[RMDB]
An RNA of 177 nucleotides, treated with 2A3 and DMS and read out base by base. For 2A3, 765 sequencing reads were counted. Source: RMDB library OK2TRN, as collected in RNAgym. For DMS, 908 sequencing reads were counted. 2A3 adducts were read by reverse transcription with SuperScript II with manganese. For DMS the reverse transcriptase was MarathonRT. The RNA was probed in 150 mM KOAc, 10 mM MgCl2 and 150 mM bicine (pH 8.5) at 24 C.
RNA sequence: GGGAACGACUCGAGUAGAGUCGAAAACACCAUGGGCAGCAGACUUGCUGAACUUGGGUAGCAUUUCAGGGCACCAAGGCAGGCUCAACUGACAGCCCUGGGUUCCUUGGACCCAACUGUCUCCAAGUGACAAGCCAGGAUUCGUCCUGGCUUGUCAAAAAGAAACAACAACAACAAC
Reactivity to 2A3 in 0.01 (KOAc 150mM, MgCl2 10mM, bicine 150mM(pH8.5), 24C), signal-to-noise 1, nucleotides 027 to 126: c030a020c000c030a010u130g000g000g000c020a040g000c020a030g080a300c170u150u120g000c000u010g030a040a030c010u000u010g010g000g090u100a070g000c040a030u090u180u190c170a120g040g050g000c060a030c130c000a000a000g020g000c050a000g000g050c020u020c070a150a090c160u080g030a080c000a050g000c000c000c000u010g020g020g020u070u050c020c030u010u050g000g030a070c000c000c040a140a040c070u020g070u000c050u000c050c000a030a060g040
Reactivity to DMS in 0.01 (KOAc 150mM, MgCl2 10mM, bicine 150mM(pH8.5), 24C), signal-to-noise 1, nucleotides 027 to 126: c130a110c010c000a050u020g000g000g000c000a110g000c020a040g000a150c270u000u000g000c010u000g000a050a100c010u000u000g000g010g000u000a100g000c040a130u000u010u000c170a070g000g000g000c050a130c010c000a040a080g000g000c120a200g000g000c030u000c180a060a070c180u000g000a100c030a050g030c030c010c030u040g000g000g000u000u000c030c010u000u000g050g010a170c010c000c010a080a040c180u000g000u000c050u000c030c030a100a050g050